[RMDB]
RNA sequence: GGGAACGACUCGAGUAGAGUCGAAAAGAAAGAAAAACCAUGAGAUUGUUUGCUUGUCACUGGGAAGUGAAGCUUGACGGGAACAUCCUCACUGUCCCUCCCCACCGCCCCUCCUGCCAUGUGCCUGUGAUCUGUGCGCAUGUGCUCAUGGUUGCCACCACCGCUAUUAUUUCGAUAAUAGCGGUGGAAAAGAAACAACAACAACAAC
Reactivity to 2A3 in 0.01 (KOAc 150mM, MgCl2 10mM, bicine 150mM(pH8.5), 24C), signal-to-noise 2, nucleotides 027 to 156: g020a030a110a010g120a040a100a010a020a030c030c010a050u040g020a050g030a090u060u070g070u160u110u150g110c050u060u040g010u040c060a070c190u080g000g000g060a080a000g040u080g050a050a020g100c040u110u170g060a070c090g020g000g030a080a060c010a090u090c020c050u060c020a040c080u070g150u080c000c000c000u010c000c000c020c020a020c010c040g030c030c000c010c000u050c010c000u000g000c000c000a010u030g020u040g020c000c000u000g000u040g080a060u050c050u070g050u190g070c010g000c020a040u060g060u110g040c000u000c000a000u000g010g000u010u080g010c000c070a020
Reactivity to DMS in 0.01 (KOAc 150mM, MgCl2 10mM, bicine 150mM(pH8.5), 24C), signal-to-noise 1, nucleotides 027 to 156: g000a150a100a130g000a060a040a080a040a020c000c020a020u000g000a040g020a170u000u000g000u010u000u000g010c020u000u020g020u000c020a030c030u000g010g000g000a270a050g000u000g020a040a060g010c040u000u000g000a110c030g000g020g000a200a050c060a050u020c040c000u000c020a050c050u000g000u000c010c000c000u000c010c000c010c030a110c050c070g000c050c010c010c050u000c030c020u000g000c030c000a080u000g050u000g020c000c000u000g020u000g000a090u000c060u000g000u020g030c060g000c020a020u000g000u000g030c020u010c020a020u000g020g010u010u000g000c030c060a150